The record gives the reactivity of an RNA of 170 nucleotides to 2A3 and DMS. The RNA was probed in 150 mM KOAc, 10 mM MgCl2 and 150 mM bicine (pH 8.5) at 24 C. The DMS profile rests on 147,804 reads. The data come from the RNA Mapping Database (RMDB), library 15KLIB.

RNA sequence: GGGAACGACUCGAGUAGAGUCGAAAAUCUUGAUGGUCUUCCUGGUCUUCCGGAGAUCUUUCUCGAGCUCCUCCGCCUUUUUCCUUGCUGUGAUCCAUUUCUCGAGGGUCUCCUCCCUUGUUCCCCUACACUACUACGUUCGCGUAGUAGAAAAGAAACAACAACAACAAC
Reactivity to 2A3 in 0.01 (KOAc 150mM, MgCl2 10mM, bicine 150mM(pH8.5), 24C), signal-to-noise 9, nucleotides 027 to 129: u040c010u030u100g050a070u110g030g020u010c010u090u050c030c020u050g040g020u060c050u180u050c060c040g020g020a040g030a040u020c000u020u110u020c030u010c010g010a010g010c010u040c020c000u010c020c010g020c010c000u040u050u020u050u050c010c000u040u090g030c040u050g050u090g080a070u050c030c010a070u050u070u050c040u020c010g020a070g000g020g020u010c030u020c020c000u030c000c000c000u010u040g010u010u010c000c000c000c000u020a030c050a010
Reactivity to DMS in 0.01 (KOAc 150mM, MgCl2 10mM, bicine 150mM(pH8.5), 24C), signal-to-noise 9, nucleotides 027 to 129: u010c040u000u050g000a080u050g000g000u000c030u000u010c020c020u010g020g000u040c050u020u010c050c070g050g020a040g020a020u000c040u000u030u020c010u010c000g000a070g020c100u000c020c000u010c020c000g020c020c030u000u000u000u000u000c030c000u000u000g040c050u000g000u030g000a050u000c020c030a120u010u010u010c010u000c000g010a100g000g000g020u020c040u010c010c020u020c010c010c000u010u030g020u000u000c010c010c000c060u010a090c190a120